Description: The data come from the RNA Mapping Database (RMDB), library OK1LIB. The record gives the reactivity of an RNA of 177 nucleotides to DMS and 2A3. The reactions ran in a buffer of 150 mM KOAc, 10 mM MgCl2 and 150 mM bicine (pH 8.5), at 24 C. The 2A3 profile rests on 3,279 reads. For 2A3 the reverse transcriptase was SuperScript II with manganese. For DMS, 3,260 sequencing reads were counted.
RNA sequence: GGGAACGACUCGAGUAGAGUCGAAAACAUACCCCAAGUCAACACACAUGGUGGGAAUUACUUUGCCCAUAAGCUGCAUACUAAUUUGGGGCCAGUUCGUUAUGGGCGCCAAAAUGGGCCGUUAGGACCUCGGUGAGUAGUUCGCUACUCACCGAGGAAAAGAAACAACAACAACAAC
Reactivity to DMS in 0.01 (KOAc 150mM, MgCl2 10mM, bicine 150mM(pH8.5), 24C), signal-to-noise 3, nucleotides 027 to 126: c290a140u000a130c070c000c000c010a050a050g040u000c120a070a190c120a060c100a090c180a150u000g000g060u010g010g030g010a170a070u020u000a110c220u000u010u000g010c000c000c020a000u000a080a040g000c020u000g000c070a020u000a120c050u010a040a090u000u000u020g000g000g000g010c080c080a120g000u030u020c090g030u000u000a050u070g040g010g000c020g000c050c070a030a040a090a090u010g010g000g030c000c030g000u040u020a010g000g060a080
Reactivity to 2A3 in 0.01 (KOAc 150mM, MgCl2 10mM, bicine 150mM(pH8.5), 24C), signal-to-noise 5, nucleotides 027 to 126: c060a060u280a120c000c010c000c000a060a000g010u040c050a100a010c040a040c010a000c020a160u210g070g000u050g020g040g050a050a020u080u050a100c060u150u210u240g070c010c000c000a040u070a080a010g010c030u060g000c040a040u040a200c010u060a080a270u080u080u090g000g000g020g000c020c010a090g030u130u130c040g040u080u020a070u160g030g000g050c030g140c010c000a040a090a080a170u090g030g000g000c050c000g010u080u070a080g030g090a050
DMS adducts were read by reverse transcription with MarathonRT.